An RNA of 177 nucleotides, treated with DMS and 2A3 and read out base by base. It was measured as part of the RMDB libraries RFM100 and RFMREP. DMS (dimethyl sulfate) methylates the pairing face of unpaired adenines and cytosines. For DMS the reverse transcriptase was MarathonRT.
RNA sequence: GGGAACGACUCGAGUAGAGUCGAAAACCGUCGCUCAACGGAUAAAAGGUACUCCGGGGAUAACAGGCUGAUCUUGCCCAAGAGUCCACAUCGACGGCAAGGUUUGGCACCUCGAUGUCGGCUCAUCAGUACUAUUGUCGUUCGCGACAAUAGUACUAAAAGAAACAACAACAACAAC
Reactivity to DMS in 0.01 (KOAc 150mM, MgCl2 10mM, bicine 150mM(pH8.5), 24C), signal-to-noise 5, nucleotides 027 to 126: c030c000g010u010c100g020c060u000c070a110a060c040g000g000a090u020a030a050a080a110g000g010u000a070c110u000c040c030g000g020g010g000a090u020a050a080c100a080g000g020c040u020g010a070u000c040u000u010g000c000c010c030a070a200g000a000g020u020c070c150a040c100a080u010c000g010a210c300g020g010c030a020a050g020g000u020u010u030g010g000c060a110c050c010u000c020g020a030u020g000u000c180g000g000c010u000c000a110u020c140
Reactivity to 2A3 in 0.01 (KOAc 150mM, MgCl2 10mM, bicine 150mM(pH8.5), 24C), signal-to-noise 9, nucleotides 027 to 126: c000c000g030u030c030g020c030u040c030a060a040c010g020g010a020u120a120a180a030a040g110g020u060a070c040u010c020c000g020g000g010g020a030u050a150a070c030a070g120g010c000u010g020a040u020c010u030u080g020c010c000c000a050a010g010a010g020u040c050c020a070c020a110u030c010g020a040c030g010g000c050a050a060g050g010u060u080u100g050g000c020a080c040c000u010c010g010a020u070g030u030c010g020g010c020u020c020a140u080c040